RNA sequence: GGGAACGACUCGAGUAGAGUCGAAAAGAUAUGGAUCCCACGCUCAUACCAUUCGUUGAAAUCGGAAACGAUGGAGAAUGGUGAUGAGCGUGUGGGAUCCUAAGUCAAACGAGCGUUCGCGCUCGAACGAUAGAUGCUGCUUCGGCAGCAUCUAUCGAAAAGAAACAACAACAACAAC
Reactivity to DMS in 0.01 (KOAc 150mM, MgCl2 10mM, bicine 150mM(pH8.5), 24C), signal-to-noise 2, nucleotides 027 to 126: g000a050u010a300u040g000g010a000u000c000c000c000a010c000g010c010u000c000a010u000a030c000c000a010u000u000c000g010u010u010g020a070a220a030u000c000g000g000a130a150a260c050g000a000u000g000g010a040g020a030a000u010g010g020u000g010a020u000g020a000g030c000g000u000g020u010g000g000g010a000u010c000c000u000a010a030g020u000c030a090a050a210c030g000a010g010c000g060u000u010c190g020c010g000c000u000c000g010a020a080
Reactivity to 2A3 in 0.01 (KOAc 150mM, MgCl2 10mM, bicine 150mM(pH8.5), 24C), signal-to-noise 1, nucleotides 027 to 126: g020a010u100a000u140g000g030a000u000c000c010c000a000c010g000c010u010c000a010u000a010c020c000a010u020u040c020g270u300u060g020a020a040a010u020c000g000g020a070a070a020c010g030a000u040g030g000a010g000a010a010u000g000g000u040g040a020u000g010a000g030c020g030u030g030u000g020g030g000a000u010c000c000u030a080a020g040u030c050a090a000a060c040g010a010g010c000g040u150u150c260g000c060g000c190u000c000g060a090a010
Record summary: Structure probing data (DMS and 2A3) for a 177-nucleotide construct. The reactions ran in a buffer of 150 mM KOAc, 10 mM MgCl2 and 150 mM bicine (pH 8.5), at 24 C. For DMS, 1,486 sequencing reads were counted.